[RMDB]
RNA sequence: GGGAACGACUCGAGUAGAGUCGAAAAGGGUUAGCGUUCGCGCUAACCCCAGGAUCGAACAUGUCAAAUCUCGCAGACAUGAAACCAUCAAAAGCGAGAAAACUAGACAGUCAUUCGUGACUGUCAACUGGACAAACGUAUUCGUACGUUUGUCCAGAAAAGAAACAACAACAACAAC
Reactivity to DMS in 0.01 (KOAc 150mM, MgCl2 10mM, bicine 150mM(pH8.5), 24C), signal-to-noise 1, nucleotides 027 to 126: g010g010g000u000u000a010g040c000g000u010u000c120g010c000g000c000u020a000a010c000c000c000c000a020g020g010a100u000c180g010a120a200c040a010u000g000u010c000a100a070a060u000c000u000c000g000c000a140g000a050c040a000u000g000a070a070a150c050c050a030u000c130a030a120a090a020g000c000g000a000g000a030a030a100a020c120u000a160g000a040c000a000g000u000c000a070u000u010c300g010u010g050a040c000u020g010u000c000a030a040
Reactivity to 2A3 in 0.01 (KOAc 150mM, MgCl2 10mM, bicine 150mM(pH8.5), 24C), signal-to-noise 2, nucleotides 027 to 126: g000g000g010u000u000a010g000c010g010u040u030c250g010c010g010c100u000a010a000c000c000c000c000a070g080g090a130u140c070g080a070a020c010a000u000g010u000c020a050a050a280u010c020u000c010g000c000a000g000a010c010a000u010g020a090a030a010c010c010a020u150c070a070a010a040a010g000c000g000a000g000a020a010a020a030c070u050a050g000a010c000a000g000u000c000a020u030u150c220g100u010g000a000c010u000g000u000c010a000a030